RNA sequence: GGGAACGACUCGAGUAGAGUCGAAAAGUGGAAACAAAUACACGUGUGUAUAUCCCAUUUUCUAUUUAAGACAAUCUGAGUUGAGUGAAGCGGAUGAGAAAAGAGAUUACCCAUGCAGCUAUUAUCCCACCUCCAGUCCAUUCGUGGACUGGAGGUGAAAAGAAACAACAACAACAAC
Reactivity to DMS in 0.01 (KOAc 150mM, MgCl2 10mM, bicine 150mM(pH8.5), 24C), signal-to-noise 1, nucleotides 027 to 126: g000u020g040g020a110a090a100c270a100a110a100u000a020c020a060c070g060u000g050u010g040u000a020u000a130u070c020c000c000a180u000u000u000u000c030u000a040u000u010u000a050a060g020a040c050a060a090u000c050u010g010a080g000u020u010g000a050g030u000g020a090a110g060c150g010g010a080u000g010a090g000a060a030a070a020g010a040g000a080u020u000a070c010c000c060a040u010g030c050a080g020c130u020a120u030u000a080u010c010c020